[RMDB]
RNA sequence: GGGAACGACUCGAGUAGAGUCGAAAAUAAUUCGAAGAUACGCGAAGAACCUUACCUAGGCUUGAUAUCCAACAAAUCCAUUAGAGAUAGUGGAGUGCUAGCUUGCUAGAAUGUUGAGACAGGUGCUGUGUGAGGCACUGUUCGCAGUGCCUCACACAAAAGAAACAACAACAACAAC
Reactivity to 2A3 in 0.01 (KOAc 150mM, MgCl2 10mM, bicine 150mM(pH8.5), 24C), signal-to-noise 1, nucleotides 027 to 126: u220a010a100u030u010c020g000a080a000g110a200u100a090c120g000c000g060a020a000g040a130a060c020c000u040u070a030c000c140u150a010g090g000c000u070u000g050a090u020a000u000c020c000a000a000c000a000a060a050u030c000c000a020u020u020a000g000a000g070a130u000a010g040u020g000g010a000g000u070g000c000u020a090g000c020u060u200g000c000u000a050g000a180a000u020g050u010u020g020a080g000a060c000a060g000g000u090g020c010u000